[RMDB]
RNA sequence: GGGAACGACUCGAGUAGAGUCGAAAAGAACUUUGGCCGGCUCGGAAUAGAAUCAGGGGGUGCAAACUGCCCACUGGCAGAAAGGAUUAUAGCAAAUGCGUACCCUGUUGCAAUACAGCCCGGCCAACAUAGACUACUCUAUUCGUAGAGUAGUCAACAAACUCUUCAGAUUCGUCUGAAGAGUUUGAAAAGAAACAACAACAACAAC
Reactivity to 2A3 in 0.01 (KOAc 150mM, MgCl2 10mM, bicine 150mM(pH8.5), 24C), signal-to-noise 2, nucleotides 027 to 156: g060a070a030c050u050u010u020g020g000c000c000g000g010c020u010c070g030g030a120a080u140a190g070a100a010u120c000a030g000g000g000g000g020u080g020c020a010a080a040c000u000g010c000c040c050a190c260u250g000g000c020a010g040a060a060a010g120g010a070u160u050a090u300a190g060c060a010a000a080u090g000c020g020u060a040c000c000c000u020g010u050u080g020c030a030a050u050a120c000a000g000c040c030c030g000g000c000c000a000a000c010a000u040a000g010a000c000u000a000c000u010c000u010a060u080u070c200g090u050a000g000a000g000u000a000g000u000c000a000a040
Reactivity to DMS in 0.01 (KOAc 150mM, MgCl2 10mM, bicine 150mM(pH8.5), 24C), signal-to-noise 2, nucleotides 027 to 156: g000a160a080c030u000u010u010g010g000c020c020g030g060c030u010c030g070g000a200a170u020a080g010a240a100u000c020a070g000g020g010g010g040u010g020c040a080a080a210c030u000g010c040c010c130a120c150u040g030g030c020a040g000a300a070a070g020g010a210u010u020a070u010a110g010c060a040a050a150u000g010c030g000u000a150c000c030c020u020g000u000u000g000c020a100a160u020a130c040a040g000c060c000c030g050g000c010c010a020a000c080a070u010a130g000a040c000u010a020c010u000c020u010a070u010u000c240g060u020a010g020a030g020u000a020g000u000c000a060a160